[RMDB]
RNA sequence: GGGAACGACUCGAGUAGAGUCGAAAACGGCCAGGAGGCAGGACAAGUCCCAUCCGGGUUUGCCGGAAUGCUGGUGCUGGAUACCCAUCCCGAACCGUAUCAGGUUAUCUGGAAUGAAAAUGAAUGGCUGUGGCCUGAUAUUCGUAUCAGGCCACAGAAAAGAAACAACAACAACAAC
Reactivity to 2A3 in 0.01 (KOAc 150mM, MgCl2 10mM, bicine 150mM(pH8.5), 24C), signal-to-noise 1, nucleotides 027 to 126: c020g030g000c000c000a050g080g040a100g100g110c090a010g010g030a010c030a090a050g130u040c000c040c010a020u040c000c050g000g080g000u090u150u130g110c010c000g000g060a100a030u070g000c030u040g030g000u070g140c060u060g010g060a020u190a170c000c020c010a020u040c000c020c010g020a010a020c010c030g000u070a080u160c040a040g040g000u050u060a030u090c000u050g010g070a100a080u070g050a150a050a010a000u150g080a140a090u100g110g000
Reactivity to DMS in 0.01 (KOAc 150mM, MgCl2 10mM, bicine 150mM(pH8.5), 24C), signal-to-noise 2, nucleotides 027 to 126: c060g020g040c010c030a060g000g010a180g000g030c050a050g020g010a080c100a080a130g010u010c010c000c030a160u000c070c090g010g000g000u000u020u000g020c010c000g020g010a070a040u000g010c000u000g020g000u000g010c000u030g010g000a090u010a100c140c050c080a130u000c010c010c020g000a080a090c030c030g020u000a080u010c140a120g000g000u000u000a020u000c060u000g000g000a080a070u000g000a080a060a070a060u010g010a120a110u000g020g010